[RMDB]
RNA sequence: GGGAACGACUCGAGUAGAGUCGAAAAUGCUGAAACAACUACUUUGAGAAACAUGGGUCAAAACAUGAAACGUGCUGUUACACCACAAAAUCACGUGACACAUGGUCCGAAAGAUAGUAUGGUGAGAAUCGAGGGAGGAAUUCGUUCCUCCCUCGAUAAAAGAAACAACAACAACAAC
Reactivity to 2A3 in 0.01 (KOAc 150mM, MgCl2 10mM, bicine 150mM(pH8.5), 24C), signal-to-noise 3, nucleotides 027 to 126: u160g060c140u130g040a110a060a040c050a030a030c000u040a010c010u000u070u090g090a170g080a110a070a020c030a020u000g000g000g000u000c030a030a140a040a010c060a100u100g060a020a000a170c020g000u000g020c040u030g120u220u180a070c090a010c070c110a090c070a060a110a040a000u040c040a010c040g040u050g030a000c010a000c000a070u070g020g020u000c000c020g010a090a000a000g030a100u060a040g030u060a210u120g180g040u110g040a070g140a000
Reactivity to DMS in 0.01 (KOAc 150mM, MgCl2 10mM, bicine 150mM(pH8.5), 24C), signal-to-noise 3, nucleotides 027 to 126: u040g020c120u000g010a100a040a050c080a060a020c000u000a000c000u000u010u000g000a130g010a120a080a050c000a000u000g000g000g000u000c020a110a060a080a130c190a090u040g030a060a060a110c090g000u000g000c210u020g000u000u030a160c140a160c220c080a010c060a080a020a090a080u000c020a010c030g010u000g000a030c000a070c010a010u000g010g040u000c060c080g030a000a040a040g010a010u010a040g000u000a120u030g010g010u000g010a200g000a090

Chemical mapping of a 177-nucleotide RNA with 2A3 and DMS. The reactions ran in a buffer of 150 mM KOAc, 10 mM MgCl2 and 150 mM bicine (pH 8.5), at 24 C. Values are in units of 0.01, from 0 to 300, in steps of 10.